[RMDB]
RNA sequence: GGGAACGACUCGAGUAGAGUCGAAAAUGGUGAAUACUCUCCUAGCGGAAGCUGUGGAGAACAACGCUAGGUCGGAGAUCGUCGAAGCGACGUCCGAAGUAAAUAAUGGUAACAGCAAGCAAGGUAAAGAUGAUAAGUACGUCGCACCGGGUAAUAGGAUAUUCAGUACGUUCGCGUACUGAAUAUCAAAAGAAACAACAACAACAAC
Reactivity to DMS in 0.01 (KOAc 150mM, MgCl2 10mM, bicine 150mM(pH8.5), 24C), signal-to-noise 2, nucleotides 027 to 156: u010g020g020u010g000a150a070u000a050c020u000c000u010c000c000u140a000g060c000g040g010a160a180g030c010u020g040u010g060g020a120g010a010a050c040a060a110c030g030c010u000a010g010g010u000c100g030g020a110g010a040u000c010g030u000c020g010a210a080g010c000g020a000c010g020u010c020c010g000a080a210g000u000a070a100a070u010a100a050u000g000g010u000a070a080c100a040g010c060a080a090g010c000a140a110g000g010u000a040a050a130g010a090u000g030a140u000a070a190g030u000a040c040g060u000c020g000c000a110c050c000g010g010g000u000a060a060u000a150g000
Reactivity to 2A3 in 0.01 (KOAc 150mM, MgCl2 10mM, bicine 150mM(pH8.5), 24C), signal-to-noise 3, nucleotides 027 to 156: u120g030g020u040g020a110a040u120a160c010u010c010u000c040c000u000a000g000c000g030g170a170a030g020c090u110g040u120g030g100a110g040a010a000c010a020a000c010g030c000u010a020g030g030u090c080g060g000a000g020a060u050c010g040u040c030g040a090a010g020c010g010a020c000g000u020c030c030g070a070a040g060u090a010a050a130u240a050a050u120g000g080u110a080a100c060a040g040c010a030a030g030c010a000a110g090g000u100a120a100a010g090a030u110g010a020u050a060a080g020u020a000c030g000u000c000g000c010a020c020c010g010g030g050u120a180a100u070a200g150
An RNA of 207 nucleotides, treated with DMS and 2A3 and read out base by base. For DMS the reverse transcriptase was MarathonRT. Values cover nucleotides 27 to 156. Source: RMDB library OK3TST, as collected in RNAgym. For 2A3 the reverse transcriptase was SuperScript II with manganese.